Chemical mapping of a 177-nucleotide RNA with DMS and 2A3.
For DMS, 2,377 sequencing reads were counted.

RNA sequence: GGGAACGACUCGAGUAGAGUCGAAAAGACGCGCAUCGAAUCGGUCGCGCCGCCCGCCGACGAUCUGUUUCCCGAGCCGGGCGGCACCCGCGAGGCGCGCGCGCGGCUCGUGGAGCUUCUGAGCGCAAGGACCACUAAAUUUCGAUUUAGUGGUCCUAAAAGAAACAACAACAACAAC
Reactivity to DMS in 0.01 (KOAc 150mM, MgCl2 10mM, bicine 150mM(pH8.5), 24C), signal-to-noise 2, nucleotides 027 to 126: g010a060c120g010c000g020c050a080u000c070g000a170a150u000c050g000g000u000c110g040c050g020c020c030g000c020c010c000g020c090c020g010a090c120g000a040u010c080u010g000u010u000u000c020c030c010g020a130g000c140c050g000g000g040c010g000g030c020a030c040c020c000g000c080g000a110g000g010c020g030c040g020c080g030c050g000c030g000g000c010u010c010g000u000g010g000a150g030c040u000u000c080u000g000a080g030c060g020c060a150
Reactivity to 2A3 in 0.01 (KOAc 150mM, MgCl2 10mM, bicine 150mM(pH8.5), 24C), signal-to-noise 2, nucleotides 027 to 126: g090a050c080g030c000g000c030a070u070c050g120a190a140u150c020g030g030u050c030g020c030g000c050c010g000c000c000c030g040c030c010g060a070c020g020a070u110c090u130g090u080u140u030c000c000c000g000a030g020c070c030g000g020g010c000g000g020c010a000c000c000c000g060c040g020a070g060g030c020g010c000g030c010g050c040g000c000g090g000c020u000c020g110u100g020g010a020g000c010u090u060c040u150g110a040g020c030g000c070a020
For DMS the reverse transcriptase was MarathonRT.